About this RNA:
The record gives the reactivity of an RNA of 207 nucleotides to 2A3 and DMS. Values cover nucleotides 27 to 156. For DMS, 2,986 sequencing reads were counted. It was measured as part of the RMDB library ARCHII.

RNA sequence: GGGAACGACUCGAGUAGAGUCGAAAAUUGGGUUCUACGCAACGAAAACCCACGAACCCUGUCAGGUCCGGAAGGAAGCAGCAGUAAGUGGCCCCUUUCGUGUGCCGUAGAGUCGCCUGGGCCGAGCUAACUGCUCAGGUAACGCCUAGGGUGGCAUCUAAGUAAGAAUCUUCGGAUUCUUACUUAGAAAAGAAACAACAACAACAAC
Reactivity to 2A3 in 0.01 (KOAc 150mM, MgCl2 10mM, bicine 150mM(pH8.5), 24C), signal-to-noise 3, nucleotides 027 to 156: u140u050g070g010g000u030u000c000u020a010c000g000c000a010a010c000g010a000a000a000a010c000c010c000a000c000g020a020a050c060c020c010u030g050u090c000a010g020g020u010c000c010g080g190a120a050g030g020a020a010g000c010a000g000c000a010g020u040a120a050g010u030g000g010c000c000c050c000u000u010u010c050g020u130g150u040g110c140c030g000u000a000g000a010g020u010c010g010c020c000u010g010g010g000c010c040g040a040g060c120u120a130a120c080u110g000c000u010c010a010g030g000u020a070a030c060g000c000c010u050a070g130g060g080u070g030g000c000a020u020
Reactivity to DMS in 0.01 (KOAc 150mM, MgCl2 10mM, bicine 150mM(pH8.5), 24C), signal-to-noise 2, nucleotides 027 to 156: u010u000g000g000g030u000u020c050u000a050c070g000c030a120a090c030g010a060a020a120a100c080c010c000a080c150g010a160a090c030c030c010u000g010u020c070a140g030g030u000c010c000g040g010a160a150g000g020a040a140g000c030a080g050c040a060g010u010a140a300g040u010g010g030c020c040c110c040u000u010u010c020g000u010g030u010g050c000c030g040u010a020g000a080g010u000c030g030c000c010u000g000g010g060c020c030g000a260g020c100u000a070a120c050u010g010c030u000c000a030g000g010u000a060a090c140g000c010c030u000a090g010g030g040u000g020g000c040a200u000